Background: An RNA of 177 nucleotides, treated with DMS and 2A3 and read out base by base. Conditions: 150 mM KOAc, 10 mM MgCl2 and 150 mM bicine (pH 8.5), 24 C. For 2A3, 552 sequencing reads were counted. The data come from the RNA Mapping Database (RMDB), library OK2TST. For DMS, 1,262 sequencing reads were counted.
[RMDB]
RNA sequence: GGGAACGACUCGAGUAGAGUCGAAAAUGCAUCUGGCAGCAGAAAGUCAUGUUGACCGCUCUAUAGAUGGCCCCGCUGCUUUUAUCGAAACCAACGUUGUGGGCACUUAUCAGAUGUUGGAGGCCGCCCUGGCCAGUUAAUUCGUUAACUGGCCAGGAAAAGAAACAACAACAACAAC
Reactivity to DMS in 0.01 (KOAc 150mM, MgCl2 10mM, bicine 150mM(pH8.5), 24C), signal-to-noise 1, nucleotides 027 to 126: u020g000c020a050u000c050u010g000g020c150a040g040c030a050g000a110a120a140g020u020c040a040u010g000u000u000g010a090c030c080g010c100u000c050u030a090u000a130g020a050u000g010g010c070c000c010c060g000c030u000g000c020u060u000u000u000a110u000c070g020a140a040a180c070c010a050a100c110g000u010u000g010u000g000g010g010c040a040c110u010u010a050u000c070a040g010a040u000g010u000u000g010g020a110g000g010c060c050g010c120
Reactivity to 2A3 in 0.01 (KOAc 150mM, MgCl2 10mM, bicine 150mM(pH8.5), 24C), signal-to-noise 1, nucleotides 027 to 126: u030g050c000a010u000c040u040g000g110c000a000g000c020a030g240a050a100a010g030u050c030a050u080g080u140u140g070a080c050c030g050c060u050c010u050a170u120a100g080a080u050g080g010c010c000c020c000g070c070u010g070c010u110u090u050u050a300u220c060g070a080a060a030c040c000a020a070c100g000u000u070g020u130g080g020g060c040a010c120u110u120a060u070c010a000g010a070u060g070u070u140g050g030a000g080g040c010c000g030c020